Conditions: 150 mM KOAc, 10 mM MgCl2 and 150 mM bicine (pH 8.5), 24 C.
Chemical mapping of a 177-nucleotide RNA with 2A3.
[RMDB]
RNA sequence: GGGAACGACUCGAGUAGAGUCGAAAAGCUCACGAGCAAACCAGAUUGCCGAGCCCAGGUGGUCGAUGUGCGCGUGGGUGAGCACGAUGGCGCGCACGUCACCCGGUGUGUAGCCCAGUUUGUUCAGCCCCGUGGGACCAUUCGUGGUCCCACGGGGAAAAGAAACAACAACAACAAC
Reactivity to 2A3 in 0.01 (KOAc 150mM, MgCl2 10mM, bicine 150mM(pH8.5), 24C), signal-to-noise 1, nucleotides 027 to 126: g010c000u030c000a020c040g020a000g050c020a030a060a000c020c000a060g030a100u020u150g090c010c020g010a010g000c020c000c020a030g030g180u130g000g000u070c130g000a150u040g020u030g000c000g030c000g000u060g000g020g060u140g020a060g010c020a020c120g150a090u180g060g060c010g000c000g030c000a000c000g000u000c040a020c000c040c020g020g000u020g030u090g000u140a060g000c000c000c010a000g010u000u000u120g000u010u030c000a000g060